RNA sequence: GGGAACGACUCGAGUAGAGUCGAAAAUCCCCCCUGCGGGGCCCCCCCAUAAGAUGGCGAGAAAUCCACUCAUGGGUCCAUCGUCCAUCUCCUUCUUACCUUUUGGCCGGCAUGGUCCCAGCCUCCUAUAUCUCUUUCUUCGGAAAGAGAAAAAGAAACAACAACAACAAC
Reactivity to DMS in 0.01 (KOAc 150mM, MgCl2 10mM, bicine 150mM(pH8.5), 24C), signal-to-noise 3, nucleotides 027 to 129: u010c000c000c020c040c070c010u030g000c150g070g060g050g010c000c020c040c010c030c000c030a040u000a020a040g000a040u000g030g020c000g030a060g010a100a100a050u000c000c000a100c190u020c180a120u040g030g020g000u020c100c030a150u000c030g020u050c040c010a000u050c070u020c050c030u070u060c040u040u040a130c020c000u000u000u000u000g020g040c130c040g050g000c040a050u050g000g000u080c000c000c000a180g010c040c000u030c040c020u000a100u030a060
Reactivity to 2A3 in 0.01 (KOAc 150mM, MgCl2 10mM, bicine 150mM(pH8.5), 24C), signal-to-noise 5, nucleotides 027 to 129: u000c000c000c000c000c000c020u100g050c170g010g000g010g000c000c000c020c000c000c000c000a090u110a040a030g000a020u020g010g000c020g020a020g030a030a040a010u000c020c010a050c090u170c090a260u170g000g000g030u010c010c010a060u010c020g100u070c010c010a010u020c010u040c010c000u150u100c020u070u120a110c030c000u110u080u050u070g020g010c030c000g030g000c050a050u100g040g010u040c020c000c000a010g000c000c000u030c000c010u140a140u020a080
The record gives the reactivity of an RNA of 170 nucleotides to DMS and 2A3. For 2A3, 6,527 sequencing reads were counted. For 2A3 the reverse transcriptase was SuperScript II with manganese. Reactivities are given for positions 27 through 129.